[RMDB]
About this RNA
This 170-nucleotide RNA was probed chemically with 2A3 and DMS. For DMS, 6,579 sequencing reads were counted. Source: RMDB library 15KLIB, as collected in RNAgym. DMS adducts were read by reverse transcription with MarathonRT. The RNA was probed in 150 mM KOAc, 10 mM MgCl2 and 150 mM bicine (pH 8.5) at 24 C.
RNA sequence: GGGAACGACUCGAGUAGAGUCGAAAAUAUGUCAUUAUUAGUGAAAAAUUGUUUGUGCGUAGUAAGGAAGAAGACGGAUUUGCCUUCUACCCUGCUUGCACUAAUGGUCAUGCUGUACCGACUCUCUGCAGUUCGACCUUCGGGUCGAACAAAAGAAACAACAACAACAAC
Reactivity to 2A3 in 0.01 (KOAc 150mM, MgCl2 10mM, bicine 150mM(pH8.5), 24C), signal-to-noise 3, nucleotides 027 to 129: u170a060u090g020u000c030a000u000u230a030u040u130a070g100u060g050a040a060a000a000a010u040u070g050u080u040u020g030u000g000c040g030u000a020g000u000a000a040g000g000a000a000g010a000a000g000a000c020g080g120a080u130u110u300g010c000c000u000u000c000u010a000c000c000c000u000g000c000u000u000g000c000a010c000u000a010a000u050g030g020u060c050a020u050g050c010u050g050u030a020c070c050g010a000c020u010c020u000c010u070g020c020a000
Reactivity to DMS in 0.01 (KOAc 150mM, MgCl2 10mM, bicine 150mM(pH8.5), 24C), signal-to-noise 2, nucleotides 027 to 129: u040a080u010g030u050c110a000u040u060a020u020u050a080g030u010g020a000a000a000a000a000u030u010g010u060u060u000g010u030g000c080g020u050a020g040u040a000a000g000g000a170a020g020a070a000g000a080c020g070g020a200u030u100u080g040c040c000u010u010c000u000a050c030c000c000u040g020c040u010u020g040c010a000c050u020a040a070u000g010g020u020c070a020u020g000c040u050g030u020a090c180c040g020a050c090u000c010u000c000u030g020c030a010